[RMDB]
RNA sequence: GGGAACGACUCGAGUAGAGUCGAAAAGAUAUGGAGGGAGAAGUGACAUGCUACCUCGUCGGAAACGACGGCGUAGCAACAGCACUCUCCCUCCUAAGUCAAAAGAGUUCCACUUCGGUGGAACUCACACUCGUCUAGGGUUCGCCCUAGACGAGUGAAAAGAAACAACAACAACAAC
Reactivity to DMS in 0.01 (KOAc 150mM, MgCl2 10mM, bicine 150mM(pH8.5), 24C), signal-to-noise 2, nucleotides 027 to 126: g020a020u000a120u010g000g000a030g000g000g000a030g030a070a030g040u000g010a020c080a090u020g010c000u000a010c010c050u000c010g010u000c000g000g000a040a040a060c000g010a010c010g020g000c300g010u000a000g040c010a020a000c200a180g010c010a000c000u000c000u010c000c010c000u000c000c000u000a000a020g000u010c010a060a090a160a140g010a000g000u010u010c000c000a000c000u000u050c210g010g010u000g000g000a000a000c000u010c010a030